[RMDB]
An RNA of 177 nucleotides, treated with DMS and 2A3 and read out base by base. Values are in units of 0.01, from 0 to 300, in steps of 10. For 2A3 the reverse transcriptase was SuperScript II with manganese. For DMS the reverse transcriptase was MarathonRT. The RNA was probed in 150 mM KOAc, 10 mM MgCl2 and 150 mM bicine (pH 8.5) at 24 C. For 2A3, 23,073 sequencing reads were counted.

RNA sequence: GGGAACGACUCGAGUAGAGUCGAAAAACGCGAGGAUUCGUCCUCGCGUACAUAAGUGAGUUCGCCGGAUAGCUGCCUAAGUGAGUUCGCCGCAUAGCUGCCAAGCACAUAGUUUCGACUAUGUGAAGAUCAAUAACUUGUUCGCAAGUUAUUGAUCAAAAGAAACAACAACAACAAC
Reactivity to DMS in 0.01 (KOAc 150mM, MgCl2 10mM, bicine 150mM(pH8.5), 24C), signal-to-noise 9, nucleotides 027 to 126: a020c000g010c000g020a010g010g010a050u000u010c220g010u000c000c000u000c000g010c000g000u000a010c110a050u000a080a090g010u010g000a090g010u000u000c050g020c030c020g000g010a090u010a080g010c050u000g010c030c030u010a060a090g010u010g000a090g000u000u000c060g020c030c040g010c060a060u010a090g000c040u000g010c030c070a070a120g000c010a010c000a000u000a010g010u000u000u010c190g010a030c010u000a010u000g010u000g000a070a090
Reactivity to 2A3 in 0.01 (KOAc 150mM, MgCl2 10mM, bicine 150mM(pH8.5), 24C), signal-to-noise 8, nucleotides 027 to 126: a000c000g000c010g000a000g010g010a030u050u060c190g050u030c060c000u000c000g000c000g000u010a000c000a050u230a060a070g070u040g110a060g020u040u080c030g010c030c000g020g020a060u070a060g030c050u050g030c030c030u070a110a050g040u020g070a040g020u040u080c030g000c030c000g000c040a030u060a060g020c030u050g010c020c010a050a010g070c000a010c000a010u010a010g010u010u080u100c210g050a020c000u000a000u010g000u010g020a020a020